[RMDB]
RNA sequence: GGGAACGACUCGAGUAGAGUCGAAAACGCAUUAAAAAGAUGACGGGGCGCAAGCUCUCGAAUUUAACGAUUGCCACCUUUCAUGCUUUUGGGGUAAAGGUCUUGCGCGAGCAGGCCAGGGCUAUUGAACGACAGAGUCAUUCGUGACUCUGUCGUUAAAAGAAACAACAACAACAAC
Reactivity to DMS in 0.01 (KOAc 150mM, MgCl2 10mM, bicine 150mM(pH8.5), 24C), signal-to-noise 2, nucleotides 027 to 126: c120g030c140a130u020u010a070a040a060a060a040g000a030u010g010a170c300g020g000g010g000c100g010c200a070a180g000c040u000c040u010c030g020a100a050u020u000u020a090a100c090g010a070u010u000g000c000c050a150c010c010u000u010u000c060a070u000g010c060u000u030u000u000g000g000g000g010u010a030a050a050g010g000u000c000u020u010g010c000g010c290g000a120g010c010a020g000g000c020c010a090g020g010g000c110u000a040u020u000g000